Structure probing data (DMS) for a 177-nucleotide construct. The data come from the RNA Mapping Database (RMDB), library TTRINS. The RNA was probed in 150 mM KOAc, 10 mM MgCl2 and 150 mM bicine (pH 8.5) at 24 C. For DMS the reverse transcriptase was MarathonRT.
RNA sequence: GGGAACGACUCGAGUAGAGUCGAAAAGAUAUGGAACGGAAAUGGUCAGUACUGAGACAUGUCGAUGGGUCGGAAACGACCCUGCCGACAACAGCUCACAUGUACUGACCAUUUCCGUUCCUAAGUCGUCUACAUAAACCUUCGGGUUUAUGUAGACAAAAGAAACAACAACAACAAC
Reactivity to DMS in 0.01 (KOAc 150mM, MgCl2 10mM, bicine 150mM(pH8.5), 24C), signal-to-noise 2, nucleotides 027 to 126: g020a080u000a300u000g010g010a010a000c000g010g000a000a000a000u000g020g000u000c000a010g030u000a010c000u010g000a070g000a050c090a160u000g010u000c010g000a170u000g000g030g020u010c000g000g020a170a130a240c020g000a010c000c000c000u000g040c190c000g000a030c000a040a130c300a250g000c090u000c020a090c300a090u000g000u000a010c000u010g030a000c010c010a000u000u000u000c000c000g010u000u000c000c000u010a000a080g000u000c110